RNA sequence: GGGAACGACUCGAGUAGAGUCGAAAAGGCACCUACAUGUGCAAGGCCAAGAACGCUAUUGGAGAAGCUGUCACGACUUGUGCUGUAAACGUAACAGCAAACAAGACACUCGAUCUGGACACCUUGGUGUUCUAUGAACGUUCGCGUUCAUAGAACAAAAAGAAACAACAACAACAAC
Reactivity to DMS in 0.01 (KOAc 150mM, MgCl2 10mM, bicine 150mM(pH8.5), 24C), signal-to-noise 5, nucleotides 027 to 126: g000g010c030a050c040c090u020a090c160a070u000g000u000g010c030a100a060g020g020c020c030a060a070g010a080a080c100g010c090u000a050u010u000g000g000a120g010a110a080g020c060u000g000u000c020a080c090g000a090c070u010u000g000u010g000c030u010g000u000a060a080a110c270g000u000a050a030c020a010g010c010a050a110a120c090a050a040g010a090c080a060c110u010c060g000a070u010c050u000g010g000a060c070a050c080c030u000u000g010g010
Reactivity to 2A3 in 0.01 (KOAc 150mM, MgCl2 10mM, bicine 150mM(pH8.5), 24C), signal-to-noise 4, nucleotides 027 to 126: g070g000c020a020c010c030u110a070c030a150u180g000u000g050c030a040a050g040g000c010c010a030a020g050a070a020c060g000c110u080a050u110u160g040g030a110g020a090a010g030c060u040g030u050c010a010c100g060a030c040u040u070g030u030g020c020u020g030u070a140a100a050c070g080u080a050a000c000a000g000c000a030a090a040c010a040a000g040a010c020a020c070u040c030g070a100u010c040u090g020g020a020c020a050c040c010u030u050g090g010